About this RNA: Chemical mapping of a 177-nucleotide RNA with 2A3 and DMS. Conditions: 150 mM KOAc, 10 mM MgCl2 and 150 mM bicine (pH 8.5), 24 C.
[RMDB]
RNA sequence: GGGAACGACUCGAGUAGAGUCGAAAAACUCACACAGAGCACACACCAACUAUUAAUUUAGAAGAGUGUGGCAAGAGAAUGGCACUCUUAGAAAUCUUAUUCCAUUCAACUUUCAAAAUAACAUGCACACCUUUCCCAAAUUCGUUUGGGAAAGGUGAAAAGAAACAACAACAACAAC
Reactivity to 2A3 in 0.01 (KOAc 150mM, MgCl2 10mM, bicine 150mM(pH8.5), 24C), signal-to-noise 5, nucleotides 027 to 126: a000c050u060c000a060c000a000c010a040g110a020g090c030a020c000a000c000a000c150c000a130a040c040u000a020u180u090a100a090u300u080u070a100g000a200a000g010a140g000u000g000u020g020g000c000a020a020g030a000g040a070a050u030g010g010c060a040c030u060c010u040u030a020g130a040a110a070u120c020u090u130a070u190u000c040c010a040u070u090c030a050a050c080u080u150u100c060a050a100a030a050u090a080a080c070a080u130g050c050a020
Reactivity to DMS in 0.01 (KOAc 150mM, MgCl2 10mM, bicine 150mM(pH8.5), 24C), signal-to-noise 1, nucleotides 027 to 126: a020c070u020c140a010c220a140c210a020g040a210g020c100a040c020a000c070a000c000c000a180a200c000u000a000u000u000a120a110u050u000u000a000g000a000a170g000a110g150u040g000u010g000g060c000a020a010g000a020g000a070a010u000g000g000c100a050c040u000c020u110u000a050g010a060a000a010u000c210u000u000a100u000u050c010c070a010u020u010c120a120a110c050u000u000u000c060a090a000a040a080u000a020a070c160a000u000g000c020a200